[RMDB]
This 207-nucleotide RNA was probed chemically with 2A3 and DMS. Values cover nucleotides 27 to 156. For DMS, 4,464 sequencing reads were counted.

RNA sequence: GGGAACGACUCGAGUAGAGUCGAAAAGCACUAGAGGGCGUAACGGCUGGGUGUAACCCAACUCUAGGUGUGCUAAUUAGCGGGCUUGACUCCGUAACAAAUAGGCACUGGUGGUAAAAAGCAUCCCUGACCAUAUACAUCUUCGGAUGUAUAUGAACUAUCCCUUGAGUUUCGACUCAAGGGAUAGAAAAGAAACAACAACAACAAC
Reactivity to 2A3 in 0.01 (KOAc 150mM, MgCl2 10mM, bicine 150mM(pH8.5), 24C), signal-to-noise 3, nucleotides 027 to 156: g010c000a010c030u010a010g000a010g010g040g000c030g050u070a080a040c080g110g000c000u020g000g020g000u050g040u040a060a070c000c010c000a010a020c020u010c010u020a050g080g000u030g010u010g020c000u000a080a040u050u100a040g050c010g000g030g030c060u110u170g050a130c040u020c070c010g010u020a050a010c020a040a060a060u120a060g010g020c010a010c030u070g020g060u090g030g040u140a090a050a020a000a010g020c000a040u030c020c000c000u020g060a020c010c000a000u010a000u010a000c000a000u000c000u000u060c210g110g000a000u000g000u000a000u000a000u000g010a000a020
Reactivity to DMS in 0.01 (KOAc 150mM, MgCl2 10mM, bicine 150mM(pH8.5), 24C), signal-to-noise 2, nucleotides 027 to 156: g020c010a010c030u000a070g000a050g000g000g010c030g000u000a080a160c220g020g020c000u020g000g020g010u010g000u010a080a300c020c030c000a030a020c000u000c060u000a110g020g000u000g000u000g020c020u000a030a000u000u000a170g030c030g010g020g040c040u000u010g000a140c120u000c010c000g030u000a070a140c130a050a090a110u000a060g020g010c010a020c010u000g020g000u010g010g010u000a020a090a080a070a050g020c040a100u000c010c010c020u010g000a170c170c010a010u000a020u010a000c010a020u010c020u000u010c270g040g020a030u000g010u000a000u010a000u000g010a040a170
The reactions ran in a buffer of 150 mM KOAc, 10 mM MgCl2 and 150 mM bicine (pH 8.5), at 24 C. The data come from the RNA Mapping Database (RMDB), library M2RFPK.